[RMDB]
Chemical mapping of a 177-nucleotide RNA with 2A3 and DMS.
RNA sequence: GGGAACGACUCGAGUAGAGUCGAAAACGCCUUCAUUGAAGUACACAGCGCCUUUUGGGUGCGAGAUUCUCAUAAAUCCAGUGAGGGCUGAGAACUGUGCCGUGGGAUCAAUUCCACUAGCAUUUGAAUUCUACCGUGUGUUCGCACACGGUAGAAUAAAAGAAACAACAACAACAAC
Reactivity to 2A3 in 0.01 (KOAc 150mM, MgCl2 10mM, bicine 150mM(pH8.5), 24C), signal-to-noise 2, nucleotides 027 to 126: c020g020c000c000u030u000c010a030u000u030g080a120a050g120u110a050c070a010c060a120g000c010g000c000c000u110u280u260u300g100g030g000u030g000c020g000a030g000a010u180u060c100u000c050a080u210a190a110a030u000c040c020a010g000u010g000a000g000g000g000c010u030g020a030g000a050a100c100u110g020u020g020c010c040g000u000g020g040g030a000u100c110a120a300u160u020c000c000a010c030u020a030g010c010a060u080u100u170g100a110
Reactivity to DMS in 0.01 (KOAc 150mM, MgCl2 10mM, bicine 150mM(pH8.5), 24C), signal-to-noise 3, nucleotides 027 to 126: c190g010c000c000u000u010c000a000u000u010g000a140a070g000u010a140c180a120c190a220g030c010g030c000c010u000u000u000u010g030g000g020u000g000c020g000a110g000a100u000u000c100u010c170a110u020a080a070a110u000c070c010a010g020u000g000a000g000g000g010c010u000g000a070g000a030a140c080u000g000u000g000c000c220g020u010g010g010g010a020u000c300a090a150u020u020c020c010a020c010u000a080g000c000a040u010u000u010g000a100

The 2A3 profile rests on 1,711 reads. The RNA was probed in 150 mM KOAc, 10 mM MgCl2 and 150 mM bicine (pH 8.5) at 24 C.